[RMDB]
RNA sequence: GGGAACGACUCGAGUAGAGUCGAAAAAGCGUUGGCCGCCAACGAUGAGAACGCUGCACCGGCGUCGCCUGCGAUCAGCGUGCACUCGCUGCCUCGCUCCCCGAGCCCUGCUGCGCGCUCUCCAGGCAUGCAAUCAUGUUUUCGAACAUGAUUGCAUAAAAGAAACAACAACAACAAC
Reactivity to DMS in 0.01 (KOAc 150mM, MgCl2 10mM, bicine 150mM(pH8.5), 24C), signal-to-noise 6, nucleotides 027 to 126: a070g020c030g020u010u000g000g010c080c080g020c050c050a040a070c110g000a090u000g000a100g000a090a040c040g010c000u000g000c070a090c070c070g010g000c020g020u010c080g020c050c030u010g010c080g010a040u010c060a020g010c010g030u000g000c160a060c080u010c040g000c070u000g010c100c090u000c020g000c070u000c020c030c050c040g000a130g000c040c030c040u010g010c100u000g010c030g010c130g010c020u000c060u000c020c070a050g000g010c080
Reactivity to 2A3 in 0.01 (KOAc 150mM, MgCl2 10mM, bicine 150mM(pH8.5), 24C), signal-to-noise 3, nucleotides 027 to 126: a010g050c030g000u010u040g080g030c080c050g060c110c010a080a040c030g060a090u190g040a020g020a040a010c010g000c020u040g000c050a040c030c050g030g020c020g150u050c040g000c010c010u040g010c060g030a070u060c060a010g010c010g030u040g000c020a040c090u050c030g040c030u020g030c020c000u010c010g020c030u080c020c000c000c010g010a030g020c010c020c000u040g040c020u010g010c020g000c020g000c000u010c000u000c010c020a010g050g000c040